[RMDB]
RNA sequence: GGGAACGACUCGAGUAGAGUCGAAAACUAUACAAAUAGUAGCAACAUCUAGAGCAUCUUAGCUUAAGUAUAUGUGUCUGUGAUUAUAUGAUUGAAAACAACUCUUUUUAGCUCUACUUUGACACUCACGUGCUUACACUUUCGAGUGUAAGCACGUAAAAGAAACAACAACAACAAC
Reactivity to 2A3 in 0.01 (KOAc 150mM, MgCl2 10mM, bicine 150mM(pH8.5), 24C), signal-to-noise 4, nucleotides 027 to 126: c020u020a000u030a160c080a010a180a040u110a060g070u030a010g020c040a010a060c000a070u010c020u080a050g020a000g050c020a050u070c060u240u110a020g060c000u080u040a180a020g130u020a050u040a040u250g050u020g060u000c030u010g110u030g090a100u100u070a070u040a080u180g090a160u070u060g070a040a010a060a030c050a020a000c010u000c030u060u000u010u030u040a020g000c000u020c000u030a020c040u030u030u200g020a010c000a010c020u020c020
Reactivity to DMS in 0.01 (KOAc 150mM, MgCl2 10mM, bicine 150mM(pH8.5), 24C), signal-to-noise 2, nucleotides 027 to 126: c020u000a060u030a130c240a070a110a070u000a000g040u000a070g010c040a090a080c110a000u000c020u030a190g000a180g020c030a090u040c160u000u010a060g010c030u000u010a020a040g040u000a080u000a050u020g000u000g010u020c060u030g020u000g000a120u000u010a040u000a050u030g050a070u000u000g000a040a030a070a070c100a070a160c090u000c010u000u000u000u000u000a150g010c010u040c000u020a030c040u000u000u010g020a070c100a100c060u000c050
An RNA of 177 nucleotides, treated with 2A3 and DMS and read out base by base. The RNA was probed in 150 mM KOAc, 10 mM MgCl2 and 150 mM bicine (pH 8.5) at 24 C. 2A3 adducts were read by reverse transcription with SuperScript II with manganese. High DMS reactivity at an A or C suggests that its Watson-Crick edge is free. It was measured as part of the RMDB libraries RFM100 and RFMREP. Values cover nucleotides 27 to 126.